Chemical mapping of a 177-nucleotide RNA with 2A3 and DMS. For DMS the reverse transcriptase was MarathonRT. The reactions ran in a buffer of 150 mM KOAc, 10 mM MgCl2 and 150 mM bicine (pH 8.5), at 24 C. Values cover nucleotides 27 to 126. It was measured as part of the RMDB library M2PK50. For 2A3 the reverse transcriptase was SuperScript II with manganese. For 2A3, 4,298 sequencing reads were counted.

RNA sequence: GGGAACGACUCGAGUAGAGUCGAAAACGUCCUAGUUUCGACUAGGACGAAAUAAAAUCAGCGGUAAAUAAUCGAGGCGUAUUACCGCUGUACGCCUCGAUAAAAUGCGAUGAUUCGUCAUCGCAAAGUACUUGGUCUGUUUCGACAGACCAAGUACAAAAGAAACAACAACAACAAC
Reactivity to 2A3 in 0.01 (KOAc 150mM, MgCl2 10mM, bicine 150mM(pH8.5), 24C), signal-to-noise 3, nucleotides 027 to 126: c000g000u010c000c000u000a010g010u000u080u070c230g090a020c000u000a010g010g010a000c000g010a000a010a000u140a010a070a000a060u090c030a010g060c020g090g090u130a070a100a100u170a120a080u120c030g000a000g000g000c010g000u010a010u000u080a060c000c020g010c020u000g000u000a000c000g030c000c010u000c000g000a010u030a010a120a000a010u030g000c000g000a000u000g010a010u010u070c140g040u000c050a000u000c000g000c000a030a020a010
Reactivity to DMS in 0.01 (KOAc 150mM, MgCl2 10mM, bicine 150mM(pH8.5), 24C), signal-to-noise 2, nucleotides 027 to 126: c000g000u000c000c000u000a030g000u010u000u010c240g020a000c000u000a000g000g010a000c000g020a010a100a060u010a070a060a040a110u000c010a020g020c020g030g010u000a120a070a060u010a060a050u000c040g020a000g000g000c000g000u010a000u000u000a150c040c060g010c020u000g030u000a000c020g000c000c000u000c020g000a030u000a010a030a090a140u000g030c000g010a010u000g000a020u000u000c190g010u000c000a010u000c020g050c000a040a010a060